RNA sequence: GGGAACGACUCGAGUAGAGUCGAAAACUUUGUCUUGGGAGAUUCGGGCUUCUCCCUGAUGGCCUUUCUGUCUUUUUCCGAGACGUAGAACUCUCCUCCACACUCUGACAUCAGUUCGCCAACAAAAUUCGCCUCAAGGGAGGCUGAAAGCAGAACGAUGAUUUGAAGUCUUCGGACUUCAAAUCAUAAAAGAAACAACAACAACAAC
Reactivity to 2A3 in 0.01 (KOAc 150mM, MgCl2 10mM, bicine 150mM(pH8.5), 24C), signal-to-noise 1, nucleotides 027 to 156: c040u050u010u120g020u000c020u040u070g030g040g000a050g060a080u160u160c110g050g010g030c010u070u020c040u060c060c030c050u110g040a060u090g000g060c010c010u030u170u030c090u150g010u020c030u010u060u010u090u000c000c060g000a020g020a000c020g020u080a040g040a100a060c010u040c000u000c140c000u040c040c000a010c000a010c000u030c040u110g070a030c030a100u050c020a050g000u060u060c000g060c020c040a090a020c020a070a140a010a050u160u040c020g000c000c020u060c030a090a100g150g050g000a000g000g020c040u020g020a060a000a000g020c020a030g040a060a010c060g040

This 207-nucleotide RNA was probed chemically with 2A3. Conditions: 150 mM KOAc, 10 mM MgCl2 and 150 mM bicine (pH 8.5), 24 C.